[RMDB]
RNA sequence: GGGAACGACUCGAGUAGAGUCGAAAACGCUCGGCCACAUUUAAAGUUUCCGGGAAAUUUCGCGCACGAUAGCGAAAGAACAACUCCUGCAAACGGGCAUCGUCGAAGGGCCAUUGUUCUUUGGCCACACUGCAUACGUGUUCGCACGUAUGCAGUGAAAAGAAACAACAACAACAAC
Reactivity to 2A3 in 0.01 (KOAc 150mM, MgCl2 10mM, bicine 150mM(pH8.5), 24C), signal-to-noise 2, nucleotides 027 to 126: c030g030c020u000c000g010g000c020c010a050c020a150u190u160u240a090a110a050g020u020u010u000c050c000g000g000g000a030a100a000u100u050u010c030g000c030g010c000a050c170g210a210u130a050g000c010g000a020a020a010g060a030a020c060a040a040c050u040c020c030u020g060c020a090a000a000c060g030g040g050c010a090u150c040g110u020c010g040a090a040g060g050g010c010c000a030u080u090g040u140u030c060u040u030u040g010g000c040c000a010
Reactivity to DMS in 0.01 (KOAc 150mM, MgCl2 10mM, bicine 150mM(pH8.5), 24C), signal-to-noise 2, nucleotides 027 to 126: c170g010c070u000c060g000g000c050c040a110c130a070u020u000u010a090a100a190g000u000u000u000c110c030g000g000g000a010a070a170u000u010u000c020g020c010g040c140a130c200g010a070u010a080g010c000g000a000a000a050g010a080a060c100a080a050c200u000c000c000u000g010c190a030a060a060c030g000g000g020c080a070u000c060g030u000c040g000a090a130g030g010g010c050c120a090u000u000g000u000u000c040u000u010u000g010g010c000c040a180